RNA sequence: GGGAACGACUCGAGUAGAGUCGAAAAUCGAGAGUGAACGUACACGUGAGUACACACACACGAUCGAACGAGAACUCGAUCUCUCUCACGAGUGUGAACGUUCUCGAACGAGUGUGAGAGUUCGUACGUGAACGAGUACACUCGUACUCGUGAACGAGAUGAAACCCGAGUUCGCUCGGGUUUCAUCAAAAGAAACAACAACAACAAC
Reactivity to DMS in 0.01 (KOAc 150mM, MgCl2 10mM, bicine 150mM(pH8.5), 24C), signal-to-noise 1, nucleotides 027 to 156: u000c090g070a080g020a150g060u000g000a110a170c140g000u010a020c030a080c130g000u000g000a130g040u000a060c060a110c110a060c020a170c070a100c000g000a090u000c010g020a150a300c020g000a150g020a030a090c070u000c020g000a220u030c010u000c010u000c020u030c140a170c150g010a090g030u000g000u000g050a170a090c060g010u000u000c000u000c000g000a090a240c060g000a090g030u000g000u000g000a080g010a080g020u000u000c000g010u000a060c000g030u000g010a050a000c000g000a180g000u010a060c000a100c090u000c140g030u020a020c010u000c030g020u000g000a100a080c030g000a220
Reactivity to 2A3 in 0.01 (KOAc 150mM, MgCl2 10mM, bicine 150mM(pH8.5), 24C), signal-to-noise 3, nucleotides 027 to 156: u120c030g010a020g010a030g010u080g040a060a050c030g030u090a000c010a010c040g040u030g050a040g070u120a020c040a020c020a060c000a000c010a010c100g090a110u040c020g000a020a030c030g030a010g030a070a010c020u020c030g030a060u010c040u010c010u000c010u020c020a030c070g010a020g020u070g030u070g060a070a020c020g010u030u000c000u000c000g010a020a020c020g010a000g020u040g000u010g030a120g010a030g050u030u040c040g020u110a030c020g030u030g020a030a010c020g000a010g030u040a000c060a030c080u070c100g000u010a040c010u010c000g010u020g040a050a010c010g030a040